Description
Structure probing data (DMS and 2A3) for a 177-nucleotide construct. The reactions ran in a buffer of 150 mM KOAc, 10 mM MgCl2 and 150 mM bicine (pH 8.5), at 24 C. For DMS the reverse transcriptase was MarathonRT.

[RMDB]
RNA sequence: GGGAACGACUCGAGUAGAGUCGAAAAGUCUAUCCAGUUCGUGGACCUGAUGGAACUCCACUUUCGACUGAUGCUUCUGGAGCUGUCAUCGGAUCUGAUGGGAAACCAAUUCCAACUGAUGAAACCGGUCGUAAAUAUCCUUCGGGAUAUUUACGACAAAAGAAACAACAACAACAAC
Reactivity to DMS in 0.01 (KOAc 150mM, MgCl2 10mM, bicine 150mM(pH8.5), 24C), signal-to-noise 2, nucleotides 027 to 126: g020u000c100u010a060u000c090c050a070g010u000u030c140g010u000g010g000a070c080c040u020g020a050u030g020g000a070a140c040u000c020c030a030c080u010u000u000c030g000a140c140u000g010a130u000g000c040u000u010c090u030g000g020a020g040c070u010g000u010c000a040u000c010g000g000a070u010c030u010g000a110u010g000g000g000a050a100a200c070c160a020a190u010u000c030c020a040a100c060u000g000a090u000g010a060a080a110c050c050g020
Reactivity to 2A3 in 0.01 (KOAc 150mM, MgCl2 10mM, bicine 150mM(pH8.5), 24C), signal-to-noise 2, nucleotides 027 to 126: g000u000c030u050a080u000c050c030a020g010u080u120c050g050u150g020g050a050c030c030u090g050a050u120g040g000a060a060c000u000c000c050a040c000u020u070u030c060g090a070c050u080g030a040u050g090c050u030u110c070u150g110g040a030g020c070u020g060u060c010a010u010c010g040g000a050u000c040u110g080a110u090g020g000g040a030a000a020c050c000a070a130u060u010c020c000a040a060c010u040g030a050u030g000a090a050a110c050c050g100